[RMDB]
RNA sequence: GGGAACGACUCGAGUAGAGUCGAAAAGAAUGUAUGUAAACCGUGUGGCAUUCAAUGGCCCCGCAAAGAAAGAAAUGCGGCAACAGGUAAAAGUGUGUAAAGCCAAAUCAUAAGCAUAGGGAAGAAACCUAUCACGGGAGUUCGCUCCCGUGAUAGGAAAAGAAACAACAACAACAAC
Reactivity to DMS in 0.01 (KOAc 150mM, MgCl2 10mM, bicine 150mM(pH8.5), 24C), signal-to-noise 2, nucleotides 027 to 126: g010a160a030u010g010u000a070u060g000u000a070a040a060c020c100g000u020g050u000g000g000c010a030u000u020c050a150a150u000g000g000c020c000c000c030g000c010a000a040a130g000a180a050a040g000a060a130a060u000g000c180g000g060c090a030a030c040a000g000g010u020a130a070a090a160g020u040g000u010g000u020a060a070a250g000c020c000a040a080a030u030c070a070u010a000a120g020c060a070u000a040g000g000g050a050a100g000a080a080a080
Reactivity to 2A3 in 0.01 (KOAc 150mM, MgCl2 10mM, bicine 150mM(pH8.5), 24C), signal-to-noise 1, nucleotides 027 to 126: g060a060a040u040g000u060a010u040g080u100a000a160a080c040c030g040u020g010u030g080g000c020a020u030u060c040a130a000u010g060g000c000c000c000c000g000c000a150a130a000g170a050a170a010g010a000a040a010u020g000c000g030g000c000a080a000c000a010g040g040u060a100a180a090a020g180u050g000u000g070u180a170a000a000g000c000c000a030a030a020u070c070a050u050a260a030g060c000a040u100a070g210g020g000a170a000g040a060a050a000